[RMDB]
RNA sequence: GGGAACGACUCGAGUAGAGUCGAAAACUCUUGCAGAUAAUUCAUAACACGCAGCCCUCAACGAUGAAGGCUGCGUCUCCCGAGAGAACGGGACCGGACAAAGGCGUCCUCGUCAGGCCACUGACGGAGGAGAAACGGCUUUCGAGCCGUUUCUCCUAAAAGAAACAACAACAACAAC
Reactivity to 2A3 in 0.01 (KOAc 150mM, MgCl2 10mM, bicine 150mM(pH8.5), 24C), signal-to-noise 2, nucleotides 027 to 126: c100u050c000u000u060g120c130a020g050a170u120a020a030u170u170c040a070u100a300a010c010a000c100g000c000a020g000c000c000c010u020c000a300a300c300g160a090u170g000a010a010g000g010c000u000g000c020g000u000c000u000c000c000c000g000a020g010a000g010a280a000c000g030g000g000a020c000c090g050g020a020c080a000a050a080g200g000c090g020u010c000c000u020c000g020u000c000a020g000g000c090c180a190c000u020g000a030c000g000g030

An RNA of 177 nucleotides, treated with 2A3 and read out base by base. The data come from the RNA Mapping Database (RMDB), library RFM100. The reactions ran in a buffer of 150 mM KOAc, 10 mM MgCl2 and 150 mM bicine (pH 8.5), at 24 C. 2A3 adducts were read by reverse transcription with SuperScript II with manganese.